[RMDB]
RNA sequence: GGGAACGACUCGAGUAGAGUCGAAAACAGCUUUGGUCUCUCAGCACUUUAAUCCUGCUUCUCGUUCCCACUUAAUUUCGCAGUUUAUUGUCCUUGACUUCUACCACGAGAAAAAAAAUUAGGAAAAGAAUAUAAAUACGUUCGCGUAUUUAUAUUCAAAAGAAACAACAACAACAAC
Reactivity to 2A3 in 0.01 (KOAc 150mM, MgCl2 10mM, bicine 150mM(pH8.5), 24C), signal-to-noise 1, nucleotides 027 to 126: c000a000g020c000u080u060u070g020g050u010c000u030c000u000c090a010g060c000a060c050u110u000u100a070a110u090c020c000u000g020c010u030u080c000u010c020g000u000u000c050c010c000a100c010u030u120a060a100u040u160u000c030g020c060a070g070u120u030u000a110u100u060g010u060c010c000u070u000g050a030c010u150u050c000u000a070c060c060a180c190g030a010g080a110a080a020a020a010a000a020a030u230u160a070g010g020a010a110a050a070